RNA sequence: GGGAACGACUCGAGUAGAGUCGAAAAGAUAUGGAAAUAUUGGGACAUGCUAUGGGUGUCGGAAACGACACGCAUAGCAACAGCCCACUGUAUUUCCUAAGUCAAAAUACCUUUGUUCGCAAAGGUAGCUUUUUCAACAGUUCGCUGUUGAAAAAGCAAAAGAAACAACAACAACAAC
Reactivity to 2A3 in 0.01 (KOAc 150mM, MgCl2 10mM, bicine 150mM(pH8.5), 24C), signal-to-noise 1, nucleotides 027 to 126: g030a010u050a040u080g000g000a000a030a000u020a000u000u010g020g000g000a050c230a290u300g050c000u020a020u020g240g290g000u010g000u020c000g020g000a050a030a040c020g000a000c000a010c020g000c030a010u000a010g040c010a020a000c000a000g000c060c010c030a000c000u090g020u000a000u030u010u020c000c000u020a040a040g040u040c040a080a000a080a230u100a050c010c010u020u000u000g110u110u160c300g000c190a050a020a000g000g030u000a010
Reactivity to DMS in 0.01 (KOAc 150mM, MgCl2 10mM, bicine 150mM(pH8.5), 24C), signal-to-noise 1, nucleotides 027 to 126: g020a030u000a230u000g010g020a000a030a010u000a000u000u000g010g010g010a030c030a300u010g020c000u000a000u000g000g000g060u010g030u000c000g010g000a070a030a080c000g010a030c000a000c000g000c010a010u000a000g010c010a040a000c240a090g020c000c000c100a000c300u020g030u010a000u000u000u000c000c000u000a060a170g000u000c030a070a090a110a200u000a010c010c000u000u000u000g010u020u020c240g010c020a010a010a000g000g050u010a020